RNA sequence: GGGAACGACUCGAGUAGAGUCGAAAAUGAAUCAUUUUCGUUCAUUACCGCGCCUCUUGUCUCCUGAAAAGUAAAAACACCCGCGUAUUGGCAACGUAGUCCGAUGUUUUUGCUGUUUUUUUACUCCCAAACGCUCGUUUUUCGAAACGAGCGUUUGAAAAGAAACAACAACAACAAC
Reactivity to DMS in 0.01 (KOAc 150mM, MgCl2 10mM, bicine 150mM(pH8.5), 24C), signal-to-noise 1, nucleotides 027 to 126: u000g000a120a010u080c160a090u000u010u020u040c150g030u010u000c020a020u000u010a230c030c090g060c040g010c020c000u010c050u010u010g030u000c000u020c010c030u090g040a030a070a100a160g000u020a010a010a090a020a120c080a030c020c000c000g000c030g010u000a100u000u000g000g000c080a050a040c000g000u010a030g030u030c030c020g010a080u010g010u000u000u000u000u000g010c000u020g000u000u000u000u020u020u000u140a110c090u020c150c120